Background:
The record gives the reactivity of an RNA of 177 nucleotides to 2A3 and DMS.
[RMDB]
RNA sequence: GGGAACGACUCGAGUAGAGUCGAAAACAGUGAGACUUCGGUCUCACUGAAAUGACUAUGCACCAUGACGAGGACGAAGAUGCGGAGGACGACGAGGAAGAAAAACAGCAAGGUUCGCCUUGCUGAAUCAUAGGUUCCAGUUCGCUGGAACCUAUGAAAAAGAAACAACAACAACAAC
Reactivity to 2A3 in 0.01 (KOAc 150mM, MgCl2 10mM, bicine 150mM(pH8.5), 24C), signal-to-noise 3, nucleotides 027 to 126: c010a000g000u000g010a000g020a010c000u050u090c270g100g000u000c010u000c000a000c000u000g000a000a000a000u090g000a000c040u040a050u180g030c020a010c070c020a040u090g040a060c030g010a010g020g030a010c020g030a060a050g040a040u080g040c050g010g050a010g040g010a040c030g000a010c040g000a030g080g010a050a050g030a040a130a030a020a020c010a000g010c010a000a020g000g030u040u070c200g100c040c010u000u000g010c000u000g010a010a050
Reactivity to DMS in 0.01 (KOAc 150mM, MgCl2 10mM, bicine 150mM(pH8.5), 24C), signal-to-noise 4, nucleotides 027 to 126: c000a010g030u000g010a010g010a010c010u000u020c200g040g020u000c000u010c000a000c000u000g000a020a060a090u000g010a100c060u000a070u000g010c040a100c040c040a070u000g000a080c080g000a060g030g030a040c080g010a060a050g010a050u000g020c040g000g010a070g000g000a040c090g000a020c050g000a060g000g010a060a080g000a040a060a070a070a230c020a000g000c000a000a010g020g000u010u000c220g000c000c000u000u000g000c000u000g000a030a070
For 2A3 the reverse transcriptase was SuperScript II with manganese.